[RMDB]
RNA sequence: GGGAACGACUCGAGUAGAGUCGAAAAGCCGCAAUAAUAAUCGAAGAAGGCGGAUGUGUUACAUUAGGGAGAAGGAAAUGGUAUUCCACCAUACUGCAAGCAUGUAUCGAUCUAAAUCCAAGGGUGCCAGCGGCAGAUAGUUCGCUAUCUGCCGCUGAAAAGAAACAACAACAACAAC
Reactivity to 2A3 in 0.01 (KOAc 150mM, MgCl2 10mM, bicine 150mM(pH8.5), 24C), signal-to-noise 1, nucleotides 027 to 126: g060c000c000g000c010a000a000u190a140a000u170a100a130u280c070g090a050a000g140a000a050g060g040c050g000g000a100u010g000u030g120u140u020a170c040a070u040u050a070g000g220g000a060g030a100a000g060g010a120a120a060u050g030g000u160a150u090u120c000c000a000c000c000a060u010a010c000u000g070c050a050a010g000c000a010u020g000u060a050u050c080g050a000u000c000u050a030a040a020u040c040c010a000a000g050g000g000u010g010c000
Reactivity to DMS in 0.01 (KOAc 150mM, MgCl2 10mM, bicine 150mM(pH8.5), 24C), signal-to-noise 2, nucleotides 027 to 126: g000c020c030g040c040a170a050u090a000a090u090a140a070u020c200g010a060a070g000a160a180g000g030c060g000g020a100u040g000u000g060u000u000a070c100a060u070u030a080g000g020g000a140g000a090a170g050g000a040a050a040u050g010g010u050a090u000u010c190c000a070c010c010a010u000a110c050u000g000c060a050a170g000c080a000u010g000u000a020u020c100g060a040u030c010u040a000a060a060u000c030c010a060a030g000g010g010u000g050c070